[RMDB]
RNA sequence: GGGAACGACUCGAGUAGAGUCGAAAAUCCAAAGGGAUCGCAUUGAUCCCAUGGUUAUCUUCCACCUCUCUUACCAGACUAUCAUAACAAAGUCUGGCCUUUUUCCCAUUGGAUCAUGCUAUCCCUUCUCGCGUUAAAGAUUCGUCUUUAACGCGAGAAAAGAAACAACAACAACAAC
Reactivity to 2A3 in 0.01 (KOAc 150mM, MgCl2 10mM, bicine 150mM(pH8.5), 24C), signal-to-noise 4, nucleotides 027 to 126: u020c000c000a030a000a000g000g000g000a000u000c010g020c000a030u050u300g000a000u000c000c000c000a000u020g020g000u100u130a090u150c060u160u040c060c010a050c010c020u080c000u020c030u080u070a060c010c000a020g010a010c000u050a080u250c100a180u160a230a070c050a070a120a000g020u000c000u010g000g000c000c000u110u080u010u060u070c020c000c000a010u000u030g000g000a000u000c000a000u000g000c000u000a000u010c000c000c000u020u010